[RMDB]
RNA sequence: GGGAACGACUCGAGUAGAGUCGAAAAGAUAUGGACGGUAGGGGAGCUCCUGGUUCGGAAACGAACCCUGAGCGAAGAACCACAACCCGUCCUAAGUCAAAGGUUACUUACUUCGGUAAGUAACCAAGGUAUUCUAUCACUUCGGUGAUAGAAUACCAAAAGAAACAACAACAACAAC
Reactivity to 2A3 in 0.01 (KOAc 150mM, MgCl2 10mM, bicine 150mM(pH8.5), 24C), signal-to-noise 1, nucleotides 027 to 126: g000a010u050a030u060g000g010a000c030g050g020u080a080g140g030g000g020a020g010c000u000c000c010u010g030g000u030u000c000g000g010a050a020a010c000g000a000a000c000c000c010u000g010a000g000c000g060a120a030g040a010a010c010c010a080c050a160a100c040c040c020g000u010c000c000u010a000a000g000u020c040a130a140a100g000g010u010u000a010c000u010u000a000c010u000u080c270g140g000u000a000a000g000u000a000a000c000c010a020a010
Reactivity to DMS in 0.01 (KOAc 150mM, MgCl2 10mM, bicine 150mM(pH8.5), 24C), signal-to-noise 2, nucleotides 027 to 126: g000a010u000a080u010g000g010a020c020g010g030u020a140g000g000g000g000a090g020c000u000c000c020u000g040g050u010u020c010g000g020a000a050a060c000g010a030a000c010c000c030u000g000a020g050c000g010a090a080g000a110a140c000c000a280c110a140a140c300c000c020g060u000c000c000u010a020a050g000u010c020a090a090a100g010g000u000u000a010c000u000u000a010c010u000u020c180g070g000u000a000a000g000u000a000a000c000c030a030a010